[RMDB]
RNA sequence: GGGAACGACUCGAGUAGAGUCGAAAAUGAAAUAAUUAUACUUUCAAACGUGAAUUUCCCCUUGCAUUUAUGGUUGAGUACUGUAUAAUACUUGUAUUGAAUCGGGAGCAUGAACAAUGAACAAAGACAUGUAGUCGUUUUUCGAAACGACUACAUGAAAAGAAACAACAACAACAAC
Reactivity to DMS in 0.01 (KOAc 150mM, MgCl2 10mM, bicine 150mM(pH8.5), 24C), signal-to-noise 2, nucleotides 027 to 126: u000g000a070a070a070u010a110a120u010u010a110u000a110c080u000u000u000c010a030a130a100c130g000u010g010a080a100u010u000u000c020c000c010c100u000u040g000c090a050u000u010u000a060u010g000g010u000u000g010a040g020u000a010c070u010g000u000a060u000a060a110u000a040c060u010u000g010u000a060u000u010g020a060a060u000c050g030g000g000a090g000c030a010u010g010a050a030c190a070a100u000g000a020a090c130a060a110a130g010a090
Reactivity to 2A3 in 0.01 (KOAc 150mM, MgCl2 10mM, bicine 150mM(pH8.5), 24C), signal-to-noise 2, nucleotides 027 to 126: u050g010a020a020a020u190a040a040u300u060a180u060a170c040u090u090u100c050a070a070a070c030g050u030g070a100a110u020u000u070c000c040c000c030u020u070g000c000a190u000u060u140a160u080g050g000u020u010g000a010g010u000a050c040u000g050u000a030u070a300a220u100a110c060u120u150g040u080a050u040u100g060a000a010u040c000g020g040g070a020g040c010a000u020g090a020a010c100a160a120u170g030a030a000c040a120a110a050g090a010